Annotation: The data come from the RNA Mapping Database (RMDB), library M2PK90. Chemical mapping of a 177-nucleotide RNA with 2A3 and DMS. In probing experiments dimethyl sulfate is read out at A N1 and C N3, which are open when not base-paired. For 2A3, 4,777 sequencing reads were counted. Values are in units of 0.01, from 0 to 300, in steps of 10. The RNA was probed in 150 mM KOAc, 10 mM MgCl2 and 150 mM bicine (pH 8.5) at 24 C. For DMS the reverse transcriptase was MarathonRT.

RNA sequence: GGGAACGACUCGAGUAGAGUCGAAAAUUAAACCGGGAGCCGUAGCGCAACGGCGACCGGAAGGGCGACGGGAACCCGAAUCUCAACCCGGAGCCCAAGCGCAAGAGAAACGGGAAGCGCAAAAAAACGUAAUUUAUAUGUUCGCAUAUAAAUUACGAAAAGAAACAACAACAACAAC
Reactivity to 2A3 in 0.01 (KOAc 150mM, MgCl2 10mM, bicine 150mM(pH8.5), 24C), signal-to-noise 2, nucleotides 027 to 126: u090u030a020a050a070c000c000g000g020g000a010g000c000c010g000u040a020g070c030g000c060a030a020c000g010g010c040g010a010c000c010g010g000a030a090g000g000g010c020g000a020c010g000g020g020a050a130c000c010c030g040a070a120u100c180u030c120a050a140c000c000c000g010g000a000g000c000c000c000a010a010g030c040g000c020a070a040g050a020g040a170a070a010c050g000g090g060a080a040g000c000g000c000a060a090a030a010a010a010a010
Reactivity to DMS in 0.01 (KOAc 150mM, MgCl2 10mM, bicine 150mM(pH8.5), 24C), signal-to-noise 3, nucleotides 027 to 126: u010u000a060a110a120c020c000g000g010g030a300g020c020c000g020u000a060g010c090g020c050a180a150c050g000g000c000g000a210c000c000g000g010a010a040g000g010g000c030g000a120c040g010g020g010a150a090c010c010c010g030a090a160u020c080u000c180a090a200c030c010c000g000g010a300g000c010c000c000a010a040g020c060g010c110a040a090g020a070g010a040a060a050c090g000g010g010a080a160g030c000g010c010a000a010a070a060a060a050a080